This 177-nucleotide RNA was probed chemically with DMS and 2A3. The RNA was probed in 150 mM KOAc, 10 mM MgCl2 and 150 mM bicine (pH 8.5) at 24 C. 2A3 adducts were read by reverse transcription with SuperScript II with manganese.
RNA sequence: GGGAACGACUCGAGUAGAGUCGAAAAUCGUGACAAUUCGUUGUCACGAAACAUUAUGUGGUGAAAUAUAAAAGGCGAAAUCCCGAUACCAUAUAAUUUAAAGAAUGGAUAGUUUCGACUAUCCAAAGAACUUGAUGUCAUUCGUGACAUCAAGUUCAAAAGAAACAACAACAACAAC
Reactivity to DMS in 0.01 (KOAc 150mM, MgCl2 10mM, bicine 150mM(pH8.5), 24C), signal-to-noise 1, nucleotides 027 to 126: u010c000g010u030g020a020c000a000a050u000u000c170g060u000u000g000u000c000a000c010g020a020a100a090c140a050u000u000a010u000g000u000g000g000u000g000a110a060a090u010a150u010a100a120a110a100g020g040c190g040a020a120a180u000c010c010c020g000a120u010a050c000c000a000u000a010u000a010a000u000u000u020a030a070a130g000a060a070u010g000g000a000u000a020g020u010u000u010c180g000a000c000u000a000u010c000c000a000a060a080
Reactivity to 2A3 in 0.01 (KOAc 150mM, MgCl2 10mM, bicine 150mM(pH8.5), 24C), signal-to-noise 1, nucleotides 027 to 126: u010c010g000u000g000a010c000a020a000u030u010c100g050u100u020g000u000c000a000c010g000a010a010a000c040a000u030u030a010u000g000u000g070g000u010g060a070a090a000u200a010u010a100a110a030a020g080g010c050g070a040a110a030u040c000c000c030g010a040u070a100c000c000a000u000a000u010a040a060u080u100u210a120a160a030g060a090a030u040g000g000a000u010a000g000u040u060u120c070g040a010c000u020a000u030c040c010a030a070a000